[RMDB]
RNA sequence: GGGAACGACUCGAGUAGAGUCGAAAAUGCUAUCCGUCUUGAGAGACAAUUUUGCGAGAGAUGCCAUACUGGCUGACAUCGAAGACCAUGUUGGACUCAGCAAGCACACUGCCACUGAGCUUGUGAAGUGGCCACGUACAUUCGUGUACGUGGCCACAAAAGAAACAACAACAACAAC
Reactivity to DMS in 0.01 (KOAc 150mM, MgCl2 10mM, bicine 150mM(pH8.5), 24C), signal-to-noise 2, nucleotides 027 to 126: u010g020c060u030a070u020c030c060g060u010c030u020u020g020a080g020a100g000a110c210a000a060u000u000u000u020g000c020g020a050g020a060g000a180u000g010c050c070a110u050a150c210u020g040g000c010u000g000a080c180a000u010c040g000a040a100g000a140c090c000a060u020g000u020u000g010g020a060c000u000c010a150g000c000a100a060g000c000a110c050a030c120u010g020c070c020a040c070u000g010a020g000c010u040u000g000u000g010a100a100
Reactivity to 2A3 in 0.01 (KOAc 150mM, MgCl2 10mM, bicine 150mM(pH8.5), 24C), signal-to-noise 4, nucleotides 027 to 126: u170g000c020u030a040u090c020c040g100u030c030u050u210g090a180g030a010g030a110c030a110a110u090u120u080u110g010c040g000a020g000a000g020a060u040g110c000c000a090u190a200c080u040g000g000c000u060g020a030c020a080u120c080g050a080a020g030a050c000c000a040u160g070u010u110g020g000a020c020u000c020a020g000c030a090a000g020c000a000c000a050c040u090g040c010c000a020c080u110g000a010g050c000u060u070g010u060g080a150a080